[RMDB]
RNA sequence: GGGAACGACUCGAGUAGAGUCGAAAACGUUCACUUCGGUGAACGAAAAAGCGUACUACUUGAUGAAACCAGCUUGGAUUUACCAAUCGGUCCCAAAUAGGACCGGAGUUGUCAGCUGGUAACCAAGUAUCGCAAAAAAGGACCGUUCGCGGUCCAAUGCUCUAAACACUUUCGAGUGUUUAGAGCAAAAAGAAACAACAACAACAAC
Reactivity to 2A3 in 0.01 (KOAc 150mM, MgCl2 10mM, bicine 150mM(pH8.5), 24C), signal-to-noise 2, nucleotides 027 to 156: c000g000u000u000c000a010c000u040u000c160g150g000u020g000a000a000c020g110a060a000a000a020a000g010c040g060u140a040c060u000a000c000u010u060g000a080u040g030a300a040a020c000c000a010g020c020u150u190g100g000a100u300u160u120a040c040c030a140a140u170c040g000g020u050c000c020c030a240a300a230u280a190g020g000a020c020c030g050g020a030g000u000u030g030u050c000a000g000c000u000g010g000u000a000a000c020c000a000a000g010u010a000u290c080g000c000a160a160a000a000a000a000g010g000a000c020c020g000u080u150c300g000c030g110g000u000c000c000a000a000
The record gives the reactivity of an RNA of 207 nucleotides to 2A3.